[RMDB]
RNA sequence: GGGAACGACUCGAGUAGAGUCGAAAAGGUAAGUAGCUUUGGUACUUGGUGUGGCAAGGAGUUUGUGCAACUCGUCUCCUCUAUGGAUUUGACUUAAUGCUAUUUGGUCAAGUCUCACAUGGCUUAAUUUUACUUCAGGUAUUGAUGAAGAUGAAGACCAUAAUAGCUCCUUCGGGAGCUAUUAUGGAAAAGAAACAACAACAACAAC
Reactivity to 2A3 in 0.01 (KOAc 150mM, MgCl2 10mM, bicine 150mM(pH8.5), 24C), signal-to-noise 5, nucleotides 027 to 156: g070g030u080a040a050g030u020a020g040c010u040u010u040g010g000u020a040c020u020u030g020g020u060g020u040g020g000c010a010a030g040g010a020g010u030u140u160g070u080g010c030a020a050c020u000c030g030u010c020u030c050c010u040c040u050a100u090g020g000a020u010u010u020g000a010c000u040u200a040a040u130g180c160u160a150u150u040u070g000g000u000c010a010a010g000u010c030u040c030a050c020a050u030g020g000c000u050u120a070a040u090u160u100u100a040c010u040u050c030a040g070g000u120a120u120u110g090a110u060g020a020a020g040a020u140g070a030a030g050a030
Reactivity to DMS in 0.01 (KOAc 150mM, MgCl2 10mM, bicine 150mM(pH8.5), 24C), signal-to-noise 2, nucleotides 027 to 156: g040g030u000a050a090g030u000a080g000c020u010u000u000g030g010u000a030c030u000u010g000g030u010g010u000g030g000c040a060a070g020g040a070g010u000u010u010g030u000g030c030a060a050c060u000c030g010u010c020u000c020c030u000c050u010a110u000g010g010a050u000u000u010g000a060c020u000u000a040a080u000g030c170u010a160u000u010u010g020g000u000c010a030a050g000u000c020u010c100a080c060a070u010g010g020c050u000u000a050a090u010u000u000u000a090c030u000u000c020a090g000g030u000a120u000u000g010a120u010g010a040a050g000a090u010g000a080a110g010a200